[RMDB]
An RNA of 207 nucleotides, treated with 2A3 and DMS and read out base by base.
RNA sequence: GGGAACGACUCGAGUAGAGUCGAAAAGCUCUGUAAUGGGAUGGGAUCCGAAGCCCCAUUGAGGGAUAAUACAGGCACUCCCAUCCAACUCCUAUUCCAACACGUCCUCGUCGUACAGAGUGGUAACUAAGGUAUAGCUCCUUCGGGAGCUAUACAAGCUUAUGCUCUUGUUCGCAAGAGCAUAAGCAAAAGAAACAACAACAACAAC
Reactivity to 2A3 in 0.01 (KOAc 150mM, MgCl2 10mM, bicine 150mM(pH8.5), 24C), signal-to-noise 3, nucleotides 027 to 156: g000c000u020c000u020g040u080a170a100u130g090g020g000a000u000g000g000g040a060u240c030c000g020a070a020g040c030c000c040c010a100u110u270g090a300g030g020g000a020u100a130a060u130a120c140a050g010g000c020a000c040u000c000c000c000a000u020c000c000a000a010c020u010c020c020u070a130u170u000c040c010a040a030c020a030c060g090u040c010c040u070c040g080u030c000g010u040a010c030a000g020a000g020u040g030g040u090a090a070c080u060a100a100g090g000u000a000u000a000g000c000u000c010c000u020u020c050g110g010g010a000g020c000u000a000u000a000c000a010a010
Reactivity to DMS in 0.01 (KOAc 150mM, MgCl2 10mM, bicine 150mM(pH8.5), 24C), signal-to-noise 2, nucleotides 027 to 156: g000c020u000c010u000g000u000a050a120u010g010g010g000a060u000g030g030g000a150u000c010c040g020a140a210g000c050c000c000c000a300u020u000g010a160g030g000g000a100u000a110a130u000a200c120a300g010g000c110a070c140u000c000c000c000a030u000c000c020a050a030c030u030c010c030u000a110u000u000c030c030a130a150c090a060c050g010u000c010c050u000c060g000u010c020g010u000a050c000a000g010a020g030u000g020g010u000a060a050c070u010a050a120g000g000u010a030u000a010g020c020u050c000c010u000u010c260g040g050g000a010g020c000u000a010u000a000c020a040a150

DMS adducts were read by reverse transcription with MarathonRT.